[RMDB]
RNA sequence: GGGAACGACUCGAGUAGAGUCGAAAAGUCGAGCGCGGUGGUGCUUGACGGCGUGUCGCUGGAGGCGUCGGGCGGUCCGACCGCGUCCGCGAUGCAUGUGGCAUCCUCGUCGCGCCUCAGUCUGCGACGGGCGAGUUUUAUUCGUAAAACUCGCCCGAAAAGAAACAACAACAACAAC
Reactivity to DMS in 0.01 (KOAc 150mM, MgCl2 10mM, bicine 150mM(pH8.5), 24C), signal-to-noise 1, nucleotides 027 to 126: g010u000c030g000a010g020c000g000c010g010g010u010g010g010u000g020c000u000u000g000a040c030g030g010c130g020u000g000u000c010g020c000u010g040g000a040g010g010c010g000u000c020g000g000g040c220g000g010u000c030c030g040a070c090c100g010c010g020u000c010c010g000c010g000a010u010g010c020a100u000g020u010g000g020c020a050u000c040c050u010c080g010u020c040g010c030g000c060c080u010c050a130g000u010c050u000g010c080g000a180
Reactivity to 2A3 in 0.01 (KOAc 150mM, MgCl2 10mM, bicine 150mM(pH8.5), 24C), signal-to-noise 1, nucleotides 027 to 126: g040u000c000g000a000g050c020g020c010g080g130u200g030g000u030g000c000u070u100g120a050c000g000g060c080g040u050g000u000c020g000c110u220g030g010a050g000g060c020g020u080c030g010g000g070c170g050g060u060c000c020g050a060c010c050g000c030g130u000c000c000g000c010g000a010u010g000c000a040u200g060u110g110g000c000a050u050c000c020u050c010g140u030c010g000c000g020c050c000u070c010a090g080u030c060u050g010c040g070a050
Annotation:
The record gives the reactivity of an RNA of 177 nucleotides to DMS and 2A3. The data come from the RNA Mapping Database (RMDB), library OK2TST. Values are in units of 0.01, from 0 to 300, in steps of 10. DMS adducts were read by reverse transcription with MarathonRT.